[RMDB]
RNA sequence: GGGAACGACUCGAGUAGAGUCGAAAAUCAUCCAAGUUCGCUUGGAUGAAACGCUACUGAAGCUAAAAACGAUCCGAGGCAACAGUACCAUAAAAGGAUCGACAGCCUGCAAAUUCGUUUGCAGGAAGAAUAGUUUUAGCUUCGGCUAAAACUAUUCAAAAGAAACAACAACAACAAC
Reactivity to DMS in 0.01 (KOAc 150mM, MgCl2 10mM, bicine 150mM(pH8.5), 24C), signal-to-noise 4, nucleotides 027 to 126: u000c000a000u000c000c000a000a000g010u000u000c260g030c010u000u000g000g010a020u010g000a010a050a050c200g020c130u000a040c020u000g000a070a300g010c030u000a050a050a080a050a090c040g010a010u000c000c000g030a090g000g010c010a040a280c030a050g010u000a060c040c060a060u010a050a020a160a070g020g000a010u000c000g000a240c220a100g010c000c000u000g000c000a000a000a050u000u010c150g010u000u000u000g010c010a000g020g000a010a030
Reactivity to 2A3 in 0.01 (KOAc 150mM, MgCl2 10mM, bicine 150mM(pH8.5), 24C), signal-to-noise 4, nucleotides 027 to 126: u020c000a000u000c000c000a000a010g010u040u100c150g000c120u000u010g000g000a000u000g010a010a010a000c040g010c060u070a020c040u110g060a060a010g010c010u070a070a060a050a010a100c010g000a010u000c010c000g050a050g010g020c010a090a020c010a160g030u070a150c020c010a020u140a100a130a020a040g000g010a010u010c010g020a020c030a010g070c010c000u000g000c000a010a020a050u080u060c180g050u040u010u000g000c000a000g000g010a000a000
This 177-nucleotide RNA was probed chemically with DMS and 2A3. For 2A3 the reverse transcriptase was SuperScript II with manganese. Conditions: 150 mM KOAc, 10 mM MgCl2 and 150 mM bicine (pH 8.5), 24 C.